This 177-nucleotide RNA was probed chemically with DMS and 2A3. It was measured as part of the RMDB library OK2TRN. For DMS the reverse transcriptase was MarathonRT. 2A3 adducts were read by reverse transcription with SuperScript II with manganese. The reactions ran in a buffer of 150 mM KOAc, 10 mM MgCl2 and 150 mM bicine (pH 8.5), at 24 C.
[RMDB]
RNA sequence: GGGAACGACUCGAGUAGAGUCGAAAAAACAAUUACAGCAAACUAAGGGUUGACAACACCUUGAAACUUUACUUAGACAAAAAGAUUGAUGAAGCAUUCUUAUUGGAGCUAACAAACAUCAUUUGUGAGUCGUAGUAAUCUUCGGAUUACUACGACUAAAAGAAACAACAACAACAAC
Reactivity to DMS in 0.01 (KOAc 150mM, MgCl2 10mM, bicine 150mM(pH8.5), 24C), signal-to-noise 2, nucleotides 027 to 126: a020a050c040a050a110u000u010a090c090a090g020c020a050a050a060c050u000a060a100g000g010g010u000u000g010a150c110a090a050c080a090c030c060u010u000g010a170a140a070c080u000u000u010a070c080u000u010a070g010a110c060a010a020a090a060a090g020a060u010u010g010a080u000g020a130a060g010c030a080u000u000c010u010u010a140u010u000g000g000a020g000c040u000a080a080c080a100a060a100c100a010u010c050a120u010u000u000g010u000g000
Reactivity to 2A3 in 0.01 (KOAc 150mM, MgCl2 10mM, bicine 150mM(pH8.5), 24C), signal-to-noise 1, nucleotides 027 to 126: a000a000c010a010a000u200u070a150c000a070g080c040a020a050a030c000u110a020a050g070g000g000u060u080g130a040c050a090a010c030a090c030c010u020u000g040a170a070a000c010u050u050u090a040c010u070u070a020g070a140c070a050a030a050a030a030g050a030u020u100g020a060u030g040a060a000g010c010a160u100u030c010u030u140a210u060u300g010g000a020g000c000u050a040a070c010a090a060a040c000a030u010c020a020u050u110u000g110u040g050